Structure probing data (2A3 and DMS) for a 177-nucleotide construct. DMS adducts were read by reverse transcription with MarathonRT. For 2A3, 392 sequencing reads were counted. The reactions ran in a buffer of 150 mM KOAc, 10 mM MgCl2 and 150 mM bicine (pH 8.5), at 24 C.

[RMDB]
RNA sequence: GGGAACGACUCGAGUAGAGUCGAAAAAUACUCCUGGACACGUGGACUUCACAGUUGAGGUUGAAAGAUCUCUAAGAGUUCUUGACGGUUCAGUUGCUGUAUUCUGUGCAAAAGGUGGGGUUGAGCCAUGCAUACUCGCAUUCGUGCGAGUAUGCAUAAAAGAAACAACAACAACAAC
Reactivity to 2A3 in 0.01 (KOAc 150mM, MgCl2 10mM, bicine 150mM(pH8.5), 24C), signal-to-noise 1, nucleotides 027 to 126: a000u160a080c000u000c000c000u020g080g000a070c070a010c160g010u010g180g000a000c000u110u070c120a140c090a180g000u090u010g130a000g070g040u000u090g060a090a050a040g030a000u000c060u000c000u050a080a080g000a000g200u020u110c000u020u180g250a000c010g000g080u100u090c000a000g050u100u070g000c010u050g000u000a150u020u000c130u080g000u050g110c180a150a200a000a000g040g030u030g040g090g040g000u010u030g030a000g140c080c000
Reactivity to DMS in 0.01 (KOAc 150mM, MgCl2 10mM, bicine 150mM(pH8.5), 24C), signal-to-noise 1, nucleotides 027 to 126: a020u090a090c080u070c070c010u060g020g050a010c000a120c190g000u000g000g000a000c000u000u130c080a300c090a130g020u010u000g000a040g000g070u000u000g000a200a110a150g000a000u000c000u000c010u020a040a040g000a090g030u000u000c000u000u070g000a160c110g000g000u000u000c030a090g130u030u010g000c050u000g000u000a000u000u000c000u000g110u010g050c060a000a020a090a080g000g070u000g010g010g020g000u000u070g000a130g000c040c070